About this RNA: The record gives the reactivity of an RNA of 177 nucleotides to DMS and 2A3. High DMS reactivity at an A or C suggests that its Watson-Crick edge is free. DMS adducts were read by reverse transcription with MarathonRT. The DMS profile rests on 187,732 reads.
[RMDB]
RNA sequence: GGGAACGACUCGAGUAGAGUCGAAAAGGAUCCUACCAUCACAGGACGGUAACUGCGUCCCGUACAGUUACCACUGUGAUGGAUGGCUGUGAUUGUACGGGACCACGGCUAGAUGCCUAUAGGAUCGCUAGAAGUGUGUAUUCGUACAUACUUCUAGAAAAGAAACAACAACAACAAC
Reactivity to DMS in 0.01 (KOAc 150mM, MgCl2 10mM, bicine 150mM(pH8.5), 24C), signal-to-noise 9, nucleotides 027 to 126: g010g000a010u000c000c000u000a100c010c000a000u000c000a010c010a010g000g010a190c210g010g000u000a000a010c010u000g010c090g000u000c030c030c040g010u010a150c000a010g000u000u000a000c000c000a100c000u000g010u000g000a010u000g000g000a030u000g010g010c010u000g010u000g000a130u000u000g010u010a060c120g000g000g000a040c080c010a010c010g000g000c000u000a050g010a130u010g010c000c000u000a150u000a010g000g000a010u000c010g010
Reactivity to 2A3 in 0.01 (KOAc 150mM, MgCl2 10mM, bicine 150mM(pH8.5), 24C), signal-to-noise 9, nucleotides 027 to 126: g030g000a000u000c000c000u000a020c000c000a000u000c000a000c000a000g030g080a060c060g010g000u010a010a000c000u010g010c010g060u040c000c010c000g020u090a020c000a010g000u000u000a000c000c000a010c000u000g000u000g000a000u010g000g000a000u010g010g000c010u000g000u010g020a110u130u110g070u100a050c030g020g030g010a000c010c000a000c000g000g000c000u010a030g010a100u160g070c000c000u020a020u020a030g000g000a000u000c000g000